[RMDB]
RNA sequence: GGGAACGACUCGAGUAGAGUCGAAAAAGAGGCGAUAAGUCGCCUCAAGCUUGGUGCUUAGCUUCUUUCACCAAGCAUAUUACACGCGGAUAACCGCCAAAGGAGAAACACUGACUACGGUCAGUGAGGAAGUUGGUUCGGUUCGCCGAACCAACAAGAGUACCAUCAUCUUCGGAUGAUGGUACUCAAAAGAAACAACAACAACAAC
Reactivity to 2A3 in 0.01 (KOAc 150mM, MgCl2 10mM, bicine 150mM(pH8.5), 24C), signal-to-noise 1, nucleotides 027 to 156: a000g000a000g000g000c000g010a010u040a190a060g270u010c000g000c000c020u000c000a000a000g000c000u000u050g000g020u010g000c010u070u060a050g040c000u000u000c000u000u000u010c000a000c000c000a010a000g000c000a010u060a000u040u170a030c090a040c020g030c010g000g000a090u090a300a220c000c000g000c000c000a000a060a000g030g000a010g050a030a110a000c000a000c000u000g020a000c010u040a000c090g030g000u000c000a000g000u020g010a000g040g010a000a160g000u010u000g000g000u000u000c000g000g010u000u000c090g010c120c000g000a000a000c000c000a000a000c000a010a000
This 207-nucleotide RNA was probed chemically with 2A3. Reactivities are given for positions 27 through 156. 2A3 adducts were read by reverse transcription with SuperScript II with manganese. The reactions ran in a buffer of 150 mM KOAc, 10 mM MgCl2 and 150 mM bicine (pH 8.5), at 24 C.